[RMDB]
RNA sequence: GGGAACGACUCGAGUAGAGUCGAAAAGGGGUCAUCUGACAUGUCGUGAAGCAACAGCUAUACUGAAGCCUCCACGGUAUAGACAUGUGGAGGCGACAACAGCAGAUGACGGAGGCACCCAAAGGGAUGACGUAGCCUUCGGGCUACGUCAUCCCAAUCAAGUACGUUAGUUCGCUAACGUACUUGAAAAAGAAACAACAACAACAAC
Reactivity to DMS in 0.01 (KOAc 150mM, MgCl2 10mM, bicine 150mM(pH8.5), 24C), signal-to-noise 1, nucleotides 027 to 156: g010g010g040g010u000c030a030u010c000u000g040a080c020a270u000g000u000c030g030u000g000a200a170g080c050a070a140c040a080g030c020u000a120u010a230c030u010g000a110a260g010c010c030u000c010c010a210c000g000g000u000a110u000a060g010a110c080a100u010g020u000g010g010a110g040g010c000g010a030c070a030a130c050a120g020c000a010g020a040u010g030a100c000g000g020a050g030g030c030a130c020c010c020a050a080a200g040g000g030a030u000g010a030c060g060u010a020g000c000c010u010u000c300g050g030g010c010u000a010c000g030u000c000a000u000c010c000c000a000a010